[RMDB]
RNA sequence: GGGAACGACUCGAGUAGAGUCGAAAAGAUAUGGAAGUUCCACUGCGCUUGGACCACGAUUCGGAAACGAAUCGUGCUAGCGUAAAGUGGAGACUUCCUAAGUCAAAACAUUCGGUUCGCCGAAUGAGACUUGUGAAAACUUCGGUUUUCACAAGUCAAAAGAAACAACAACAACAAC
Reactivity to 2A3 in 0.01 (KOAc 150mM, MgCl2 10mM, bicine 150mM(pH8.5), 24C), signal-to-noise 2, nucleotides 027 to 126: g000a020u070a040u150g020g010a000a010g000u030u030c000c030a010c010u040g020c000g040c070u070u170g070g070a170c200c000a010c030g000a010u000u020c000g000g050a050a080a060c000g000a000a020u000c000g010u010g010c000u000a000g030c010g000u050a230a300a070g010u000g000g000a090g080a010c000u020u000c000c010u010a110a010g050u030c020a070a050a130a160c020a020u000u000c000g030g120u070u080c300g060c070c010g010a010a020u000g010a010
Reactivity to DMS in 0.01 (KOAc 150mM, MgCl2 10mM, bicine 150mM(pH8.5), 24C), signal-to-noise 2, nucleotides 027 to 126: g000a070u010a300u000g000g020a020a020g030u000u000c000c000a000c000u000g000c020g000c000u020u020g050g020a150c300c010a020c000g000a010u000u000c000g010g010a140a140a190c010g010a000a000u000c000g020u020g020c030u000a000g000c010g000u000a040a030a080g000u000g010g000a020g000a020c000u000u000c000c010u000a010a100g010u000c030a160a110a090a250c000a020u000u000c020g000g040u020u030c300g040c000c010g000a010a000u000g000a090